[RMDB]
RNA sequence: GGGAACGACUCGAGUAGAGUCGAAAAUCAACGGCUCAUCAGUGGGCUAAGCCCAGACUUAUGAGAGAUUAGUCACCUCUCAGCCCCUCCACCUUGGGGUGCCCUAGUCGGACACUGCAGUUCCGAUACUCUUAAUGAUCUUCGGAUCAUUAAGAGUAAAAGAAACAACAACAACAAC
Reactivity to DMS in 0.01 (KOAc 150mM, MgCl2 10mM, bicine 150mM(pH8.5), 24C), signal-to-noise 3, nucleotides 027 to 126: u000c110a110a120c100g000g000c020u000c020a060u010c190a130g010u000g010g000g020c010u000a070a130g000c040c020c030a110g000a080c080u010u000a070u000g010a010g000a020g000a020u000u000a090g000u000c080a140c240c010u000c010u000c010a110g020c020c000c010c000u000c110c100a090c130c110u000u000g010g030g010g020u000g000c030c020c010u010a060g020u000c070g010g000a070c040a060c030u000g000c110a090g000u000u000c000c010g000a210u010
Reactivity to 2A3 in 0.01 (KOAc 150mM, MgCl2 10mM, bicine 150mM(pH8.5), 24C), signal-to-noise 3, nucleotides 027 to 126: u060c010a030a050c030g030g020c010u000c040a110u020c040a070g130u080g040g020g000c020u070a060a010g020c010c030c040a070g090a130c040u150u120a040u130g000a000g000a000g000a020u020u030a020g040u040c020a010c010c000u000c020u020c010a000g000c020c010c000c010u030c030c030a110c060c000u030u050g000g000g010g050u040g020c010c000c000u040a090g020u030c030g010g010a010c020a030c080u220g070c070a080g020u140u000c020c000g010a000u030